An RNA of 177 nucleotides, treated with DMS and 2A3 and read out base by base.
RNA sequence: GGGAACGACUCGAGUAGAGUCGAAAAUCCAUAAGGUUCGCCUUAUGGAAAAAGCGGCCAGCUCCAGGCCGCAAAAAUAAAUGGACCACAAGACGAAAGUCAAAACAGUACUCUUCGGAGUACUGAAGUAUAGGGGAAUGUUCGCAUUCCCCUAUACAAAAGAAACAACAACAACAAC
Reactivity to DMS in 0.01 (KOAc 150mM, MgCl2 10mM, bicine 150mM(pH8.5), 24C), signal-to-noise 2, nucleotides 027 to 126: u000c010c010a040u000a000a020g010g000u010u010c190g030c000c000u010u020a010u010g000g000a010a010a040a160a170g030c010g000g010c030c010a070g000c190u000c010c020a000g010g000c000c000g050c000a000a000a050a090a010u030a020a010a110u000g010g020a020c060c030a180c300a100a080g000a000c010g000a070a040a130g000u000c010a050a060a060a140c010a010g010u000a010c010u000c000u010u000c190g040g000a010g010u000a000c000u000g010a010a050
Reactivity to 2A3 in 0.01 (KOAc 150mM, MgCl2 10mM, bicine 150mM(pH8.5), 24C), signal-to-noise 2, nucleotides 027 to 126: u010c000c000a000u000a000a010g040g020u030u100c120g100c020c000u000u000a000u000g000g010a080a020a000a010a030g000c000g000g000c000c010a020g030c040u000c010c010a000g000g010c000c000g000c000a060a000a000a000a000u070a010a020a020u030g020g010a030c020c010a040c070a130a040g020a000c000g030a120a020a010g020u030c020a000a010a040a080c000a020g010u000a000c010u000c030u040u190c250g090g000a000g000u010a000c000u000g000a020a010
For 2A3, 3,040 sequencing reads were counted.
High DMS reactivity at an A or C suggests that its Watson-Crick edge is free.